[RMDB]
RNA sequence: GGGAACGACUCGAGUAGAGUCGAAAAAUCAAAAUGAAGUUGAUAUACUAGAUUGGAAGAAGCCUGAAGCCUUUUCCGAUGAAAUGAGGCCAGUGCAGCAUGCCCUGCAAACAAUGGAAUCUAGAGAGGUAAAUUAAUUAUUCGUAAUUAAUUUACCAAAAGAAACAACAACAACAAC
Reactivity to 2A3 in 0.01 (KOAc 150mM, MgCl2 10mM, bicine 150mM(pH8.5), 24C), signal-to-noise 1, nucleotides 027 to 126: a020u110c060a080a030a030a130u240g040a110a010g000u010u000g060a030u060a020u000a230c000u020a010g060a160u000u080g090g000a100a080g020a080a000g020c000c040u110g040a100a000g000c030c000u180u010u070u030c030c070g070a030u240g040a000a130a000u090g010a040g000g000c000c000a010g020u020g110c030a010g000c000a040u070g070c020c000c040u010g010c040a110a090a000c030a030a020u080g070g020a000a010u020c010u000a050g020a040g000a080
Reactivity to DMS in 0.01 (KOAc 150mM, MgCl2 10mM, bicine 150mM(pH8.5), 24C), signal-to-noise 3, nucleotides 027 to 126: a080u000c040a030a060a120a140u000g010a120a170g010u000u000g000a080u010a110u000a160c040u000a060g010a080u000u010g000g020a050a060g000a060a060g020c010c050u000g010a120a200g000c020c020u000u030u000u010c040c100g010a100u010g010a050a070a060u000g000a060g000g000c000c030a020g020u010g020c030a070g000c070a050u000g010c070c060c010u000g010c060a060a060a100c110a040a060u000g010g000a080a030u020c040u000a070g010a180g000a140